[RMDB]
RNA sequence: GGGAACGACUCGAGUAGAGUCGAAAAGGGGGCGAAUAGGGUUCGACGUUUCUACUGGACUCCGAAGCGCAUGCCAAGAUUGUAGUAAUUCUUGUAAAACAUACUACAAAAAAAAUAGUUGCAAAUAACGACAACUACGCUUUAGCAGCUUAAUGCUCUAACACGUGAUGUUCGCAUCACGUGUUAGAAAAGAAACAACAACAACAAC
Reactivity to 2A3 in 0.01 (KOAc 150mM, MgCl2 10mM, bicine 150mM(pH8.5), 24C), signal-to-noise 4, nucleotides 027 to 156: g020g010g000g000g000c030g010a030a060u090a070g010g020g010u040u060c020g050a040c090g020u010u070u040c050u040a080c090u070g020g010a010c020u000c090c020g030a030a010g000c030g000c070a040u100g060c020c010a010a010g050a060u030u080g000u010a000g000u000a030a140u160u070c050u010u090g150u180a030a060a010a030c030a070u030a000c000u020a000c000a040a040a000a000a000a000a000a000u030a010g000u000u010g000c020a020a080a210u120a170a080c040g070a040c020a040a010c020u080a040c040g010c040u030u110u150a020g010c040a000g010c000u090u120a100a020u200g000c000u000
Source: RMDB library RSTRND, as collected in RNAgym. Structure probing data (2A3) for a 207-nucleotide construct. The RNA was probed in 150 mM KOAc, 10 mM MgCl2 and 150 mM bicine (pH 8.5) at 24 C. As a SHAPE reagent, 2A3 marks flexible, mostly unpaired nucleotides at the ribose 2'-OH. For 2A3, 2,625 sequencing reads were counted.